Structure probing data (2A3 and DMS) for a 207-nucleotide construct. Values cover nucleotides 27 to 156. For 2A3, 9,805 sequencing reads were counted.

RNA sequence: GGGAACGACUCGAGUAGAGUCGAAAAAUCAGAGGGCGCUAUCAUGCAAACUAGGAUUGUCUGCUCAUGCACAGAACCAACUACCGAUAACUAACAGUGCAUGAAGGUUAGUUAUUCCAUAGUAAUUAAAACUCGUAAUUCUUCGGAAUUACGAGAACCAAUCAAUACAGUUCGCUGUAUUGAUUGGAAAAGAAACAACAACAACAAC
Reactivity to 2A3 in 0.01 (KOAc 150mM, MgCl2 10mM, bicine 150mM(pH8.5), 24C), signal-to-noise 9, nucleotides 027 to 156: a000u040c030a020g020a040g040g020g000c020g000c030u110a130u300c070a080u300g010c030a010a050a040c020u030a030g050g020a040u020u060g040u060c020u060g030c000u000c010a000u020g000c010a010c000a020g060a140a100c050c020a070a070c050u150a150c030c100g030a020u000a010a010c000u000a000a010c010a040g030u020g060c000a010u020g020a030a020g050g000u000u000a000g000u000u010a020u090u060c040c010a110u080a110g090u140a170a060u190u130a070a080a050a070c000u000c000g000u000a000a000u000u000c010u020u030c170g090g000a000a000u000u000a000c000g000a000g000a000a000
Reactivity to DMS in 0.01 (KOAc 150mM, MgCl2 10mM, bicine 150mM(pH8.5), 24C), signal-to-noise 4, nucleotides 027 to 156: a070u000c040a070g010a130g020g030g010c190g020c050u000a070u010c100a110u010g020c020a090a090a130c060u000a140g020g010a120u000u000g020u000c040u010g010c000u010c060a120u010g050c040a090c030a080g010a100a100c050c030a040a070c050u000a110c130c030g000a050u010a040a050c040u000a010a030c010a120g000u000g020c050a070u010g000a110a100g030g000u000u000a030g010u000u000a040u000u000c060c080a090u000a070g000u000a060a140u000u000a030a050a080a120c000u000c000g040u000a010a020u000u000c000u000u000c290g040g010a030a010u000u010a000c000g010a000g000a010a100

DMS adducts were read by reverse transcription with MarathonRT.